[RMDB]
This 177-nucleotide RNA was probed chemically with 2A3 and DMS. The DMS profile rests on 12,177 reads. For 2A3 the reverse transcriptase was SuperScript II with manganese. For 2A3, 9,730 sequencing reads were counted. The reactions ran in a buffer of 150 mM KOAc, 10 mM MgCl2 and 150 mM bicine (pH 8.5), at 24 C.

RNA sequence: GGGAACGACUCGAGUAGAGUCGAAAAGAUAUGGAGCUACUCCCCACCCUCUGACUAGCAAUGAUGCUCGGUAGCUCGGAAACGAGCUACCGAGUUGAGCUAGAUUGAGGAGGUAGCUCCUAAGUCAUCAUUAUACAAUCUUCGGAUUGUAUAAUGAAAAAGAAACAACAACAACAAC
Reactivity to 2A3 in 0.01 (KOAc 150mM, MgCl2 10mM, bicine 150mM(pH8.5), 24C), signal-to-noise 4, nucleotides 027 to 126: g080a060u180a160u270g000g000a000g010c000u020a010c030u200c060c040c000c010a020c010c020c000u060c020u040g130a250c000u020a000g000c010a070a300u300g120a060u170g230c000u000c010g000g010u000a000g010c000u000c000g010g010a070a080a020c000g000a000g010c000u000a000c000c000g000a000g000u000u000g000a000g000c000u000a000g000a020u060u110g010a000g000g010a000g000g000u000a000g000c010u000c010c000u010a040a000g120u080c040a090
Reactivity to DMS in 0.01 (KOAc 150mM, MgCl2 10mM, bicine 150mM(pH8.5), 24C), signal-to-noise 8, nucleotides 027 to 126: g000a060u000a110u000g000g010a020g010c000u000a010c010u000c130c010c010c040a300c130c010c000u000c010u010g020a060c010u010a000g010c000a170a140u010g000a060u000g000c000u000c000g000g010u000a000g010c000u000c000g000g000a040a070a130c010g010a010g010c000u000a000c000c010g000a000g010u000u000g010a290g000c000u000a010g000a150u000u000g000a020g010g000a090g010g000u000a000g000c000u000c000c000u000a010a050g030u000c080a170